[RMDB]
RNA sequence: GGGAACGACUCGAGUAGAGUCGAAAAAGCUGCUCAAAAUCGGCGGAAAGGACCCCGCUAUCGGGAGGGGCUAGCAGCGAGGGUUGCCGCUCCAGCCGCGCUAUGAAGCAGCCAUAGCAGAUUUACACCGAUCCUGCAUAUUCGUAUGCAGGAUCGGAAAAGAAACAACAACAACAAC
Reactivity to 2A3 in 0.01 (KOAc 150mM, MgCl2 10mM, bicine 150mM(pH8.5), 24C), signal-to-noise 1, nucleotides 027 to 126: a000g020c000u030g000c000u040c150a060a110a040a150u110c020g000g000c010g020g080a020a020a040g030g030a000c000c020c000c020g000c020u070a110u120c070g060g040g060a070g070g090g040g030c050u050a010g000c010a000g000c020g000a300g020g010g020u060u110g170c000c010g030c000u060c010c000a040g000c000c010g010c000g000c020u010a000u000g010a070a000g000c020a000g000c000c010a000u030a000g000c010a000g040a180u180u100u110a100c080a060
Reactivity to DMS in 0.01 (KOAc 150mM, MgCl2 10mM, bicine 150mM(pH8.5), 24C), signal-to-noise 1, nucleotides 027 to 126: a090g000c000u010g020c000u030c250a060a030a160a040u010c010g030g020c000g000g000a000a130a260g000g010a140c050c010c010c000g010c000u000a040u000c140g040g010g020a140g000g020g010g000c050u000a130g020c160a010g030c000g000a160g020g020g010u010u000g010c020c110g000c150u010c020c010a170g080c010c040g000c300g010c010u000a020u000g000a040a000g000c000a020g010c000c000a000u000a000g000c000a260g000a090u030u000u010a120c140a130